[RMDB]
RNA sequence: GGGAACGACUCGAGUAGAGUCGAAAAGAAGCCAGGAAACGUCAUUCCCAGUGGUCACCUCCCUGCUCUCCACUCCUAUGCUCUGUAGGAGAGAGAAGAGAGCUUGAAGCAGACCAGCAGACGACGGCCCCGUUUCCUAAAUGCAGGGGCUUCCACACAUCAUAGCUAGGUUCGCCUAGCUAUGAUGAAAAGAAACAACAACAACAAC
Reactivity to 2A3 in 0.01 (KOAc 150mM, MgCl2 10mM, bicine 150mM(pH8.5), 24C), signal-to-noise 2, nucleotides 027 to 156: g050a040a020g060c050c060a050g010g000a000a040a080c020g000u010c020a030u020u010c010c010c020a070g100u060g020g000u050c050a050c050c010u060c000c000c010u030g000c010u000c000u000c000c010a030c030u030c000c010u020a020u060g160c060u100c160u300g030u010a010g020g000a010g010a000g010a010g060a220a000g010a020g000a000g010c000u000u020g010a010a010g000c070a010g020a000c010c000a000g060c010a040g030a030c060g010a000c020g050g020c000c000c000c000g050u040u080u050c030c010u100a180a100a000u210g030c110a090g000g020g040g040c000u020u010c000c000a060c010a000
Reactivity to DMS in 0.01 (KOAc 150mM, MgCl2 10mM, bicine 150mM(pH8.5), 24C), signal-to-noise 2, nucleotides 027 to 156: g020a120a080g030c000c070a110g000g020a020a020a120c040g000u000c050a140u000u010c020c030c020a300g020u000g020g010u000c020a150c140c010u010c020c050c020u000g030c010u010c010u000c010c080a160c050u000c010c020u000a020u010g010c150u020c150u000g000u000a020g010g020a050g010a080g020a120g000a080a040g000a060g030a040g000c030u000u000g030a030a040g020c050a200g030a030c010c010a050g030c080a090g010a080c040g030a070c060g020g000c020c020c070c020g010u000u010u000c050c000u010a050a090a110u000g000c060a150g000g000g040g020c040u000u000c000c010a110c100a290